Source: RMDB library OK2TST, as collected in RNAgym. Chemical mapping of a 177-nucleotide RNA with 2A3 and DMS. Values are in units of 0.01, from 0 to 300, in steps of 10. The 2A3 profile rests on 8,235 reads. Conditions: 150 mM KOAc, 10 mM MgCl2 and 150 mM bicine (pH 8.5), 24 C.

RNA sequence: GGGAACGACUCGAGUAGAGUCGAAAAUUUACCUGCUUCUUUCACCAAGCGGUCAAGGUCGCUUUUUGUACCGUAUACGGUGACCACAUCGCCUUGGCGUAAAAUGGUGUCAUCACUUAAAGGUUGAGCUAAUUAGCUCAUUCGUGAGCUAAUUAGCAAAAGAAACAACAACAACAAC
Reactivity to 2A3 in 0.01 (KOAc 150mM, MgCl2 10mM, bicine 150mM(pH8.5), 24C), signal-to-noise 6, nucleotides 027 to 126: u060u040u060a120c000c010u020g060c020u050u030c010u020u070u020c000a010c010c000a050a040g110c050g050g030u030c020a040a040g030g010u180c050g060c110u090u120u040u070u170g060u030a020c000c030g080u080a070u040a130c090g020g000u010g070a020c000c020a060c010a040u020c010g020c010c000u010u030g050g000c000g040u110a040a060a050a100u060g000g000u010g030u030c030a050u060c010a050c080u100u240a160a060a060g080g000u040u050g020a010
Reactivity to DMS in 0.01 (KOAc 150mM, MgCl2 10mM, bicine 150mM(pH8.5), 24C), signal-to-noise 5, nucleotides 027 to 126: u010u010u010a140c010c000u000g010c070u000u000c030u000u000u000c030a030c000c010a040a110g020c070g020g000u000c040a040a060g020g010u000c080g030c130u000u000u010u000u000g020u020a030c050c060g000u000a300u010a120c080g010g020u000g000a040c070c120a110c170a020u000c030g000c040c020u010u000g000g020c020g010u010a050a050a090a130u010g010g010u000g000u000c080a050u000c030a050c090u000u010a070a130a090g010g010u000u010g000a110